[RMDB]
RNA sequence: GGGAACGACUCGAGUAGAGUCGAAAAGUCCUACAAUGGAACAUACAGACGGCCGCGAACCCGCGAGGGUAAGCUAAUCCGAAAAAGUGUUCCUUAGUUCGGAUUGCAGGCUGCAACUCGCCUGCAUUCGGUAUGCACUUUUCGAAGUGCAUACCGAAAAAGAAACAACAACAACAAC
Reactivity to DMS in 0.01 (KOAc 150mM, MgCl2 10mM, bicine 150mM(pH8.5), 24C), signal-to-noise 2, nucleotides 027 to 126: g010u000c000c000u000a010c080a110a200u050g000g040a000a000c000a000u000a040c180a220g030a290c030g000g010c300c270g000c000g000a190a010c000c000c010g000c300g010a210g000g000g030u000a010a300g020c000u010a170a170u000c010c000g000a040a020a090a070a160g030u040g000u000u000c010c000u000u020a110g000u010u030c060g000g000a010u000u020g000c000a040g000g000c010u000g000c160a110a100c100u020c070g000c000c000u000g000c000a070u000
Reactivity to 2A3 in 0.01 (KOAc 150mM, MgCl2 10mM, bicine 150mM(pH8.5), 24C), signal-to-noise 4, nucleotides 027 to 126: g030u010c000c000u000a030c020a040a140u170g000g000a000a000c000a010u100a050c020a050g240a060c010g010g010c040c050g000c010g030a080a110c010c000c000g040c020g040a140g040g000g000u000a000a000g000c000u030a060a030u000c000c000g070a150a000a000a010a010g020u010g000u010u000c000c000u000u030a080g010u020u130c130g010g050a060u050u080g000c000a010g010g010c010u030g040c050a050a090c080u030c160g000c010c000u000g000c000a010u010